[RMDB]
RNA sequence: GGGAACGACUCGAGUAGAGUCGAAAAGAUAUGGAGUUUCCCUGAAUCGACGAAGAACUCGGAAACGAGGGAGUCGUGGCAGGGAGAACUCCUAAGUCAAAGGCAUAAUACUUCGGUAUUAUGCCAAGAUUUGAUGGAUCUUCGGAUCCAUCAAAUCAAAAGAAACAACAACAACAAC
Reactivity to DMS in 0.01 (KOAc 150mM, MgCl2 10mM, bicine 150mM(pH8.5), 24C), signal-to-noise 2, nucleotides 027 to 126: g000a050u000a300u000g000g000a010g000u000u000u000c000c000c000u000g000a100a080u010c000g010a000c000g030a110a140g000a170a210c010u020c010g010g000a100a050a240c000g000a020g020g000g000a080g010u000c000g000u000g010g010c020a030g000g000g000a010g020a030a010c000u000c000c000u000a020a070g000u010c040a090a070a110g000g020c000a020u000a000a000u000a010c000u000u000c230g030g020u000a000u000u010a000u000g010c000c000a000a010
Reactivity to 2A3 in 0.01 (KOAc 150mM, MgCl2 10mM, bicine 150mM(pH8.5), 24C), signal-to-noise 1, nucleotides 027 to 126: g060a030u080a050u210g000g010a000g020u000u000u000c000c000c030u000g040a080a100u070c020g030a000c030g080a300a130g020a090a090c000u000c010g020g000a060a060a050c000g000a000g000g030g010a020g010u000c020g050u070g070g100c010a000g000g000g000a100g040a020a000c000u000c000c010u000a160a000g020u020c060a100a070a040g010g000c010a010u000a020a010u000a010c020u060u140c300g080g010u010a000u000u000a000u010g000c020c000a000a000